[RMDB]
RNA sequence: GGGAACGACUCGAGUAGAGUCGAAAAGAAAGAGCCGGUGAGACUAAAUGUCUGAAAGCUCGAACUGUGAUAAAUUCACUGUGAAAAGAGCCGACGCUCACCGUCGGUGAGUGAACCGGGAAAGAAACCCAACUAAUUAGUUCGCUAAUUAGUUGGGAAAAGAAACAACAACAACAAC
Reactivity to 2A3 in 0.01 (KOAc 150mM, MgCl2 10mM, bicine 150mM(pH8.5), 24C), signal-to-noise 5, nucleotides 027 to 126: g040a010a150a010g050a040g100c010c000g000g020u040g020a030g000a010c020u070a270a090a170u250g000u000c000u020g030a110a030a010g000c000u000c000g010a010a000c000u020g000u010g020a030u070a210a210a090u170u020c010a000c020u060g010u020g150a090a010a060a110g020a040g010c020c010g010a020c020g000c010u030c010a010c020c000g260u130c090g000g000u000g000a000g000u020g000a010a020c000c010g000g030g060a010a090a040g090a040a030a010
Reactivity to DMS in 0.01 (KOAc 150mM, MgCl2 10mM, bicine 150mM(pH8.5), 24C), signal-to-noise 6, nucleotides 027 to 126: g000a070a180a160g000a190g030c000c000g000g020u030g000a020g000a020c000u010a090a160a090u050g010u000c000u000g000a170a180a150g010c000u010c000g000a080a060c010u000g000u000g010a020u020a070a100a110u070u000c000a000c010u010g010u000g000a080a050a130a160g000a050g020c000c010g000a220c040g000c030u000c010a000c020c010g010u030c120g020g030u000g000a000g020u000g000a140a030c030c010g010g000g000a050a100a100g000a130a070a100

Chemical mapping of a 177-nucleotide RNA with 2A3 and DMS. The 2A3 profile rests on 4,499 reads. It was measured as part of the RMDB library OK1LIB. For DMS the reverse transcriptase was MarathonRT. Conditions: 150 mM KOAc, 10 mM MgCl2 and 150 mM bicine (pH 8.5), 24 C. 2A3 adducts were read by reverse transcription with SuperScript II with manganese.